[RMDB]
RNA sequence: GGGAACGACUCGAGUAGAGUCGAAAAUUAGAGGUCUCGAUCACAGCGAGACCGGGAGAGACGCUCCCGGGCCGGGUUAGGAACCGGUGCGGCGGGUGGUAUUGGAGCCGGCCGGACCCGGGGAUAAGCAAUAAAUACUAUUCGUAGUAUUUAUUGCAAAAGAAACAACAACAACAAC
Reactivity to 2A3 in 0.01 (KOAc 150mM, MgCl2 10mM, bicine 150mM(pH8.5), 24C), signal-to-noise 3, nucleotides 027 to 126: u180u110a040g040a040g120g010u010c010u000c000g050a150u240c070a050c050a150g120c020g000a000g000a010c000c000g000g020g000a110g000a010g000a010c050g030c060u030c010c020c000g000g010g010c020c010g040g020g020u080u150a130g110g010a080a030c010c020g000g030u080g060c020g050g030c090g030g050g030u120g030g030u090a090u050u140g040g000a010g010c020c000g060g000c000c000g100g010a190c030c000c000g010g020g000g000a090u070a140a040
Reactivity to DMS in 0.01 (KOAc 150mM, MgCl2 10mM, bicine 150mM(pH8.5), 24C), signal-to-noise 5, nucleotides 027 to 126: u010u010a150g000a130g020g010u000c000u000c000g010a080u000c170a100c300a170g010c010g010a010g000a020c000c000g010g000g000a090g010a130g010a080c130g010c100u000c000c000c000g010g010g020c010c000g010g000g000u000u010a100g020g010a090a090c020c010g000g000u000g010c010g010g000c050g000g010g010u000g010g000u000a050u000u010g000g000a190g010c010c010g000g010c000c010g000g010a070c010c000c000g000g000g010g000a040u000a050a140